[RMDB]
RNA sequence: GGGAACGACUCGAGUAGAGUCGAAAACUGUGAAGCCGCUCGCGCCGAAAGCAUGCCGUCGCAAGCCAGUGGAGGUAUUCACUGAUGCCGAUCAAGCUAUCUUCCGUGCAUGUACGGAUCGCCGGGCCUAUCCGUAGGUGUUCGCACCUACGGAUAGAAAAGAAACAACAACAACAAC
Reactivity to DMS in 0.01 (KOAc 150mM, MgCl2 10mM, bicine 150mM(pH8.5), 24C), signal-to-noise 3, nucleotides 027 to 126: c050u000g010u000g010a130a140g010c090c060g010c030u000c040g000c070g000c000c000g000a090a080a070g020c040a060u010g000c030c030g000u000c030g000c080a060a060g010c300c030a030g020u000g010g010a060g010g030u010a100u000u000c040a030c030u020g010a080u000g000c050c060g000a080u000c120a120a150g000c040u000a120u010c050u000u000c010c010g000u010g010c040a040u010g020u010a090c030g010g000a060u000c060g030c070c050g010g000g000c080
Reactivity to 2A3 in 0.01 (KOAc 150mM, MgCl2 10mM, bicine 150mM(pH8.5), 24C), signal-to-noise 3, nucleotides 027 to 126: c050u060g040u110g230a090a000g120c050c050g010c070u040c030g000c000g000c000c030g060a140a040a010g030c000a010u020g010c020c010g030u080c030g000c060a030a020g020c000c020a030g000u030g010g040a030g100g080u180a300u070u050c120a120c190u100g020a040u070g030c030c020g020a100u140c080a090a020g010c000u030a040u170c050u100u000c060c020g050u130g040c010a030u000g020u060a070c010g000g000a090u140c050g010c100c010g030g010g020c000